Description:
An RNA of 177 nucleotides, treated with DMS and read out base by base.
[RMDB]
RNA sequence: GGGAACGACUCGAGUAGAGUCGAAAAGAUAUGGAUCUCGUGAACUCAACAGCUCGGAAACGAGACAUGAGUGAACACGAGGAUCCUAAGUCAAACAUAAAGAUUGACUUCGGUCAAUCUUUAUGAAUCAAAGGAGUUUGUUCGCAAACUCCUUUGAAAAAGAAACAACAACAACAAC
Reactivity to DMS in 0.01 (KOAc 150mM, MgCl2 10mM, bicine 150mM(pH8.5), 24C), signal-to-noise 2, nucleotides 027 to 126: g000a070u000a300u000g000g000a000u000c000u000c000g000u000g020a090a020c010u000c000a060a090c220a230g010c010u000c000g000g000a060a050a210c000g010a000g000a010c110a110u000g000a030g000u000g000a150a050c010a030c010g000a030g010g000a000u000c000c000u000a050a120g020u000c010a050a090a300c020a020u000a010a000a000g010a010u000u000g000a010c000u000u020c220g030g010u000c000a010a010u000c010u000u000u000a000u000g000a140a180